RNA sequence: GGGAACGACUCGAGUAGAGUCGAAAAUUUUAAUGAGGAGUGAUGUAGUUACAAACUCUCCAGAGCCAUAAUUAGAGCAAACUAAUUGAAGUUGUGUUUUGACACACUUUCCAAAUUCACGGGUGCCCAACAACCAGGUAUUCGUACCUGGUUGUUGAAAAGAAACAACAACAACAAC
Reactivity to 2A3 in 0.01 (KOAc 150mM, MgCl2 10mM, bicine 150mM(pH8.5), 24C), signal-to-noise 2, nucleotides 027 to 126: u040u000u020u060a040a100u110g050a020g020g000a000g000u030g050a070u050g010u120a140g040u170u190a010c010a040a110a050c020u010c000u000c000c020a040g010a000g160c000c000a070u040a140a060u090u020a010g050a010g070c070a060a030a110c040u050a080a000u050u040g080a090a000g020u130u100g000u010g040u010u110u070u110g130a000c000a000c000a000c010u040u010u040c040c030a020a100a130u080u060c000a020c090g030g000g000u020g000c000c000
Reactivity to DMS in 0.01 (KOAc 150mM, MgCl2 10mM, bicine 150mM(pH8.5), 24C), signal-to-noise 4, nucleotides 027 to 126: u010u010u010u040a080a140u010g030a120g000g010a030g000u000g010a210u010g020u020a130g050u010u050a120c090a080a140a120c030u000c010u000c010c030a070g010a100g020c030c050a050u020a070a020u000u000a010g010a150g020c210a090a090a110c030u000a030a060u010u000g000a020a110g000u020u000g000u000g000u000u010u040u010g010a060c030a020c020a030c050u000u000u010c070c060a050a070a110u030u010c080a040c110g010g010g030u000g040c050c050
Structure probing data (2A3 and DMS) for a 177-nucleotide construct. Values are in units of 0.01, from 0 to 300, in steps of 10. The reactions ran in a buffer of 150 mM KOAc, 10 mM MgCl2 and 150 mM bicine (pH 8.5), at 24 C. The data come from the RNA Mapping Database (RMDB), libraries RFM100 and RFMREP.